[RMDB]
RNA sequence: GGGAACGACUCGAGUAGAGUCGAAAAGCUUUUAGGCAGACACUAACUAAAACAUCCCAAACAAAUGAACAUGGAGUGAGGAACAUGGCUGAGUCCAGGCCUCAGAUCCCAGAUAUGGCUGUGGGAGAAAGGAGACCCGGUCUGCAUCUCAGGAGGACCAGGGUAUGAUAUUCGUAUCAUACCCUGGAAAAGAAACAACAACAACAAC
Reactivity to DMS in 0.01 (KOAc 150mM, MgCl2 10mM, bicine 150mM(pH8.5), 24C), signal-to-noise 1, nucleotides 027 to 156: g010c130u000u000u020u010a080g020g060c020a040g000a060c090a170c020u040a060a070c020u000a060a030a020a050c040a080u000c000c020c000a070a110a180c050a120a110a100u000g000a130a140c020a200u000g000g010a230g030u020g020a070g060g010a120a040c020a100u000g030g000c060u010g000a100g010u030c020c020a050g000g000c030c000u000c010a070g000a090u000c020c000c000a080g000a190u000a070u010g040g010c000u000g080u010g030g070g000a110g000a100a120a100g010g000a130g010a110c050c020c000g030g040u010c020u000g020c050a070u000c050u020c000a020g000g000a160g050g000a190
Reactivity to 2A3 in 0.01 (KOAc 150mM, MgCl2 10mM, bicine 150mM(pH8.5), 24C), signal-to-noise 2, nucleotides 027 to 156: g020c050u060u050u020u170a060g030g000c050a010g130a040c010a030c110u220a190a030c010u120a050a110a020a050c090a040u020c000c010c030a060a040a030c100a040a090a070u290g040a090a030c010a040u060g030g000a000g090u130g020a000g020g030a070a110c080a180u040g010g010c010u120g050a050g070u030c000c010a010g000g040c020c010u000c010a000g000a060u030c020c010c000a000g040a080u110a100u190g040g000c050u060g030u080g070g000g020a030g140a040a090a010g040g020a050g020a010c040c060c000g060g000u000c010u020g020c010a070u030c010u020c030a060g090g060a000g130g000a000
An RNA of 207 nucleotides, treated with DMS and 2A3 and read out base by base. Conditions: 150 mM KOAc, 10 mM MgCl2 and 150 mM bicine (pH 8.5), 24 C. High DMS reactivity at an A or C suggests that its Watson-Crick edge is free. The data come from the RNA Mapping Database (RMDB), library OK3TST. 2A3 is a SHAPE reagent: it acylates the 2'-hydroxyl of flexible nucleotides of all four kinds. DMS adducts were read by reverse transcription with MarathonRT.